[RMDB]
RNA sequence: GGGAACGACUCGAGUAGAGUCGAAAACACACUCCCUUCGGGGAGUGUGAAAGAACGCGUGGGACACGCAAGGAGGAGCGUGUGGGACGCGACAAACCCAAUAAAGUGGAUAGUUCGCUAUCCACAACUACUGAGUAAACUUCGGUUUACUCAGUAGAAAAGAAACAACAACAACAAC
Reactivity to 2A3 in 0.01 (KOAc 150mM, MgCl2 10mM, bicine 150mM(pH8.5), 24C), signal-to-noise 9, nucleotides 027 to 126: c000a000c000a000c000u000c000c010c030u010u060c220g040g000g000g000a000g000u000g000u000g000a000a000a000g050a150a040c000g010c010g010u020g020g300g020a000c010a000c020g010c050a060a060g190g090a090g060g060a160g030c010g010u010g000u000g010g180g010a000c010g000c000g010a000c010a010a070a020c000c010c030a020a090u220a100a100a010g010u010g000g000a000u000a010g010u030u050c190g000c110u000a000u000c000c000a000c000a000a000
Reactivity to DMS in 0.01 (KOAc 150mM, MgCl2 10mM, bicine 150mM(pH8.5), 24C), signal-to-noise 6, nucleotides 027 to 126: c000a000c000a010c000u000c000c000c000u000u010c180g020g000g020g010a010g010u000g010u000g010a020a050a110g020a100a110c010g010c000g010u010g030g010g010a040c000a010c000g010c010a070a090g010g000a300g010g010a110g000c010g010u000g010u000g050g010g000a020c000g020c000g020a070c100a060a120a090c000c000c000a100a110u010a060a090a130g010u010g000g010a010u000a000g010u000u020c220g010c000u000a010u000c000c000a000c000a060a090